[RMDB]
RNA sequence: GGGAACGACUCGAGUAGAGUCGAAAACGCUGGGCUCCGUGGUGGAGCUCGGACUGAAGCGCGCACGGUCCUGAGCGAUGAAACGUAACAUCGGAGCCUGUGCUGAAGCGCGCACGGCAACCGAAAGGUGCGAUCUCCGCGCGUUCGCGCGCGGAAACAUUCUAAGCCAAUUCGUUGGCUUAGAAUGAAAAGAAACAACAACAACAAC
Reactivity to 2A3 in 0.01 (KOAc 150mM, MgCl2 10mM, bicine 150mM(pH8.5), 24C), signal-to-noise 3, nucleotides 027 to 156: c030g010c010u030g010g010g010c000u000c020c020g030u080g120g130u110g070g110a040g010c000u020c000g000g000a000c010u020g030a240a060g000c000g000c010g000c010a030c010g020g000u030c020c140u230g000a000g010c020g100a160u100g110a090a070a050c110g030u180a070a070c030a150u170c090g000g010a010g020c000c000u020g000u020g000c030u160g050a140a050g030c000g000c000g010c010a000c010g060g010c040a140a150c010c000g060a090a030a020g030g000u030g000c030g040a070u040c020u000c100c000g000c000g010c010g010u060u070c220g020c030g000c000g000c030g080g000a000a000a000
Reactivity to DMS in 0.01 (KOAc 150mM, MgCl2 10mM, bicine 150mM(pH8.5), 24C), signal-to-noise 1, nucleotides 027 to 156: c100g020c020u000g000g010g030c000u020c000c000g050u040g050g020u000g020g030a170g020c020u000c000g030g010a010c020u020g020a100a160g010c000g060c010g000c020a300c020g020g000u000c010c010u020g020a040g040c050g010a180u000g010a060a120a130c100g030u000a100a130c070a140u010c000g050g030a200g010c020c060u000g010u010g010c020u000g010a100a100g040c060g040c040g050c000a100c070g000g010c060a130a150c020c000g000a090a200a240g010g020u000g010c020g000a110u000c020u000c000c000g030c000g040c000g000u000u000c300g020c000g040c010g030c000g010g000a010a030a040